[RMDB]
RNA sequence: GGGAACGACUCGAGUAGAGUCGAAAAAGUUGCCCAAUGUUUAGAGGGUGUAGUUGGCUCAAGUUCCUGUUUACCAGGUAGAACCUACUUGCAGCUGCUGCAUUCACGUGAUAUCAAUGGGCUUCCUGCUUGAUGUGUGGUUCGCCACACAUCAAGCAAAAGAAACAACAACAACAAC
Reactivity to 2A3 in 0.01 (KOAc 150mM, MgCl2 10mM, bicine 150mM(pH8.5), 24C), signal-to-noise 1, nucleotides 027 to 126: a000g060u060u150g010c010c000c000a030a090u060g000u010u040u010a100g030a070g040g010g000u020g010u020a060g020u100u300g030g020c000u030c010a010a000g010u000u020c000c000u000g010u000u240u100a100c100c000a000g050g000u030a070g090a120a010c000c010u020a020c080u010u000g040c020a000g010c010u010g040c000u000g000c000a000u010u000c040a020c070g030u090g030a060u050a010u230c100a080a030u020g000g010g000c000u010u000c000c000u000